An RNA of 177 nucleotides, treated with DMS and read out base by base.
The reactions ran in a buffer of 150 mM KOAc, 10 mM MgCl2 and 150 mM bicine (pH 8.5), at 24 C.
The DMS profile rests on 531 reads.
The data come from the RNA Mapping Database (RMDB), library M2PK50.

RNA sequence: GGGAACGACUCGAGUAGAGUCGAAAAGCCCCCGUCUUCGGACGGGGGCAAUUAACGGUCGCCGCAUGCAGCUAGUCGAAAAUGCUGCUCGACCUUUUGCUAAAAUACGACCCUUCGGGGUCGUAAACGAUAUGAUCCACUUCGGUGGAUCAUAUCGAAAAGAAACAACAACAACAAC
Reactivity to DMS in 0.01 (KOAc 150mM, MgCl2 10mM, bicine 150mM(pH8.5), 24C), signal-to-noise 1, nucleotides 027 to 126: g060c020c020c030c030c020g050u000c000u000u000c200g030g000a020c020g080g000g010g030g040c000a030a000u000u050a000a160c160g010g040u040c000g050c300c070g010c240a050u020g000c000a010g000c030u000a260g010u010c220g000a050a140a090a120u000g010c000u000g010c010u020c030g060a040c000c000u000u000u000u000g010c030u000a100a030a080a140u000a030c000g000a000c000c000c000u010u000c090g030g030g030g000u000c000g000u000a000a000a110